An RNA of 177 nucleotides, treated with DMS and 2A3 and read out base by base. For 2A3, 4,092 sequencing reads were counted. For DMS the reverse transcriptase was MarathonRT.
RNA sequence: GGGAACGACUCGAGUAGAGUCGAAAAAUUGUCGCUCUACCUAGCCAGCGACGACGCGCGUCAGAUCACCGGCACACACGUCUCGAUUGACGGUGGCUGGACUGCGGAAUAACGAUAGACGGUUAGGAUAUCGGGUAGGUUUCGACCUACCCGAUAUAAAAGAAACAACAACAACAAC
Reactivity to DMS in 0.01 (KOAc 150mM, MgCl2 10mM, bicine 150mM(pH8.5), 24C), signal-to-noise 5, nucleotides 027 to 126: a070u050u030g010u000c000g010c010u000c080u030a110c000c000u000a000g010c000c020a130g010c000g000a030c010g000a070c080g020c040g020c130g030u000c030a030g000a110u020c070a070c030c000g000g010c000a090c170a050c100a150c080g010u010c050u010c300g030a140u010u050g010a000c030g020g010u010g000g000c000u000g000g000a020c020u020g020c010g000g000a160a080u060a090a090c160g010a110u020a080g020a100c080g000g000u010u000a000g000g000
Reactivity to 2A3 in 0.01 (KOAc 150mM, MgCl2 10mM, bicine 150mM(pH8.5), 24C), signal-to-noise 6, nucleotides 027 to 126: a010u110u120g000u000c010g000c000u040c010u060a070c000c000u000a000g010c000c000a010g000c010g010a010c000g000a000c000g040c000g010c050g120u120c020a010g020a300u070c000a040c060c000g020g000c040a010c000a000c020a030c250g150u060c050u050c170g300a240u050u280g000a010c000g000g000u000g000g030c000u050g020g030a020c010u030g000c010g000g060a090a090u260a150a040c170g090a070u100a100g120a050c020g030g000u000u000a010g020g010